The data come from the RNA Mapping Database (RMDB), library OK2TST. This 177-nucleotide RNA was probed chemically with 2A3 and DMS. For DMS the reverse transcriptase was MarathonRT. The DMS profile rests on 1,747 reads. For 2A3 the reverse transcriptase was SuperScript II with manganese. As a SHAPE reagent, 2A3 marks flexible, mostly unpaired nucleotides at the ribose 2'-OH. The 2A3 profile rests on 1,881 reads. Reactivities are given for positions 27 through 126.

RNA sequence: GGGAACGACUCGAGUAGAGUCGAAAAGCAUUAAUGCGUCGAGCUCUCCCUCCGACAGAGCGUCUCGAAAAUCUAGAAGACUAGAAAGGGAGGAGGUAUAGCGAAUACGCAGUUCGCUAUCUGCGUACCAGUGACGGAAUUUCGAUUCCGUCACUGGAAAAGAAACAACAACAACAAC
Reactivity to 2A3 in 0.01 (KOAc 150mM, MgCl2 10mM, bicine 150mM(pH8.5), 24C), signal-to-noise 2, nucleotides 027 to 126: g020c020a040u100u170a290a070u240g020c020g040u020c030g010a000g000c010u010c000u000c010c020c010u050c020c010g020a020c010a010g090a000g010c020g020u000c000u000c020g100a060a040a030a050u030c020u000a050g030a230a060g150a300c020u040a010g050a060a090a020g050g010g000a020g000g030a020g070g030u150a020u050a110g020c020g070a040a000u100a050c100g000c090a010g020u000u060c040g000c050u020a040u030c040u050g020c020g030u000a080
Reactivity to DMS in 0.01 (KOAc 150mM, MgCl2 10mM, bicine 150mM(pH8.5), 24C), signal-to-noise 2, nucleotides 027 to 126: g020c050a190u010u000a140a100u000g010c080g020u000c030g020a090g010c020u010c010u010c030c000c000u000c010c010g000a030c040a100g030a140g030c050g020u000c000u030c020g010a110a040a060a030u010c020u010a030g010a180a130g010a110c020u000a000g000a010a050a040g000g000g010a030g000g020a100g000g010u000a020u000a010g030c020g000a020a050u010a070c180g000c190a170g000u000u000c070g010c020u020a020u000c050u000g030c130g020u000a130